RNA sequence: GGGAACGACUCGAGUAGAGUCGAAAACGAUCUGUUUUCAGAUCGAGCUACGUUUUCGUAGCGAUGUGGAGCGCACCCACCAGCUCCACUAUACUAGAUAUUAAAGGAUAGCCGCCGGUACCAGGCUAUCCGGUGGGUGGUAUGAUCGGUGCCGGAAACCGAUAUCCUACUUCGGUAGGAUAUCGGUAAAAGAAACAACAACAACAAC
Reactivity to 2A3 in 0.01 (KOAc 150mM, MgCl2 10mM, bicine 150mM(pH8.5), 24C), signal-to-noise 1, nucleotides 027 to 156: c010g000a000u020c000u000g050u170u130u230u300c020a000g000a000u010c000g010a010g020c000u000a000c000g070u100u010u070u300c020g000u010a000g020c000g010a130u150g000u000g020g000a010g010c020g010c000a010c000c000c000a000c000c000a000g000c000u000c000c020a000c000u020a000u010a000c020u030a050g180a130u070a040u220u300a180a060a010g000g000a000u000a030g000c010c000g050c110c020g040g000u010a010c000c000a000g000g030c030u030a000u000c000c000g000g000u000g010g010g030u020g090g060u280a140u300g060a100u160c090g000g000u000g000c000c000g000g020a130a030
An RNA of 207 nucleotides, treated with 2A3 and read out base by base.